Description: The record gives the reactivity of an RNA of 177 nucleotides to 2A3 and DMS. 2A3 adducts were read by reverse transcription with SuperScript II with manganese. Reactivities are rounded to 0.1 and cut off at 0 and 3. Source: RMDB library OK1LIB, as collected in RNAgym.

RNA sequence: GGGAACGACUCGAGUAGAGUCGAAAAGACUGCGUGCACUAGAGACGAUAUCGAGCCGGAAAUUAAUCGAUAAUGUCUCCUGUAGUGGAUACGAUCCGGCAAGUAUCGACUACGUGUGCUCGUAGGACAUGACGUCCUGGUUCGCCAGGACGUCAUGAAAAGAAACAACAACAACAAC
Reactivity to 2A3 in 0.01 (KOAc 150mM, MgCl2 10mM, bicine 150mM(pH8.5), 24C), signal-to-noise 3, nucleotides 027 to 126: g070a010c020u020g000c000g000u010g000c000a010c030u030a000g000a000g000a020c010g010a020u010a020u130c020g000a010g000c010c000g050g100a010a240a060u300u180a080a090u160c020g030a040u030a090a080u200g050u030c010u060c050c020u060g040u100a040g090u010g060g010a000u000a020c000g010a040u010c010c000g000g000c040a040a000g000u010a000u000c000g080a010c010u040a090c010g070u050g000u010g000c000u000c010g010u000a000g000g030a010
Reactivity to DMS in 0.01 (KOAc 150mM, MgCl2 10mM, bicine 150mM(pH8.5), 24C), signal-to-noise 1, nucleotides 027 to 126: g000a090c000u000g000c000g000u010g010c000a000c010u000a300g000a000g000a000c000g060a110u000a000u020c030g000a220g040c010c000g000g000a060a210a140u000u020a070a190u010c090g010a040u000a020a140u000g000u000c000u000c000c020u060g000u000a090g010u000g000g010a010u130a010c000g000a030u000c000c020g000g030c010a170a250g000u000a000u000c000g030a050c000u000a030c010g070u000g000u000g010c000u000c000g000u000a150g070g050a090